Structure probing data (2A3 and DMS) for a 177-nucleotide construct.
For DMS the reverse transcriptase was MarathonRT.
Conditions: 150 mM KOAc, 10 mM MgCl2 and 150 mM bicine (pH 8.5), 24 C.
The data come from the RNA Mapping Database (RMDB), library OK2TRN.
For 2A3, 2,870 sequencing reads were counted.
RNA sequence: GGGAACGACUCGAGUAGAGUCGAAAAACUCGGUCGGCGUGAGAUGCACUUCGGCACCGUCUUUGAUGACCUUCUUGCCGGCCAGAUCGACGGUGAAUGAAUCGGUUUCGAUCACCGGCUGCUCCAACCGUGUCAGAUAGUUCGCUAUCUGACACGGAAAAGAAACAACAACAACAAC
Reactivity to 2A3 in 0.01 (KOAc 150mM, MgCl2 10mM, bicine 150mM(pH8.5), 24C), signal-to-noise 2, nucleotides 027 to 126: a000c010u010c000g010g000u010c000g000g000c010g020u060g020a070g000a030u090g000c040a040c130u040u060c040g030g000c050a020c020c050g020u000c000u060u110u140g170a200u070g010a060c000c000u130u090c050u050u140g020c020c000g000g010c000c000a000g020a060u020c030g030a020c000g010g030u050g090a150a230u130g020a050a020u100c100g110g000u050u090u070c000g000a010u000c010a020c010c010g000g070c000u000g000c010u000c010c000a060a150
Reactivity to DMS in 0.01 (KOAc 150mM, MgCl2 10mM, bicine 150mM(pH8.5), 24C), signal-to-noise 3, nucleotides 027 to 126: a100c060u010c050g020g000u000c020g000g000c040g010u000g020a240g000a050u000g020c050a100c150u000u000c040g030g010c060a050c100c070g020u010c020u000u010u010g010a160u000g020a060c010c030u000u000c100u010u010g050c110c070g010g000c040c060a050g010a060u000c060g020a040c000g010g020u000g010a110a120u010g000a050a030u000c100g050g000u020u010u000c010g030a100u000c020a080c010c010g010g010c050u000g030c080u000c020c050a100a180